[RMDB]
RNA sequence: GGGAACGACUCGAGUAGAGUCGAAAAUCCACUAUGAAUCUAGUCACUAAUUAAACACAAUUAGCUACUGUGUGUAAUAGUGAGUGUUGAUAACACAAAAUAAUAGUAUAGUUUUGGAAGAUUAUACGCGCCCUUGCUCCGUUCGCGGAGCAAGGAAGUAGUGUAUGGGGUUCGCCCCAUACACUACAAAAGAAACAACAACAACAAC
Reactivity to 2A3 in 0.01 (KOAc 150mM, MgCl2 10mM, bicine 150mM(pH8.5), 24C), signal-to-noise 5, nucleotides 027 to 156: u020c010c000a000c020u070a070u140g110a160a040u050c070u070a020g040u000c010a000c010u020a080a080u040u050a140a280a010c050a010c020a060a050u040u020a020g030c030u040a020c010u010g020u010g000u000g010u170a020a020u000a010g000u020g070a100g030u020g030u000u060g100a230u180a300a020c030a010c030a060a100a030a060u270a060a080u080a090g000u000a000u000a020g010u020u030u140u170g110g050a080a080g000a090u020u040a010u020a010c030g030c000g080c040c000c010u000u000g000c000u000c000c000g010u040u030c140g000c010g090g000a000g000c000a000a000g000g000a000a000
Reactivity to DMS in 0.01 (KOAc 150mM, MgCl2 10mM, bicine 150mM(pH8.5), 24C), signal-to-noise 2, nucleotides 027 to 156: u010c010c010a130c100u010a100u000g000a190a070u010c050u010a180g020u020c040a050c000u010a040a100u000u000a030a080a060c040a030c020a010a030u010u000a230g030c170u000a060c030u010g020u000g020u000g020u010a080a030u000a010g000u000g010a100g000u010g010u000u000g000a100u000a110a110c040a040c000a050a080a090a100u000a120a300u010a050g010u000a030u000a000g020u000u000u000u020g000g000a210a150g030a040u000u000a040u000a010c000g000c150g030c090c000c000u000u000g000c000u000c000c000g020u000u010c300g120c100g000g000a000g010c000a000a000g020g010a000a010

The record gives the reactivity of an RNA of 207 nucleotides to 2A3 and DMS. The 2A3 profile rests on 2,650 reads. High 2A3 reactivity points to a flexible backbone, as in loops and unpaired stretches. The DMS profile rests on 2,555 reads.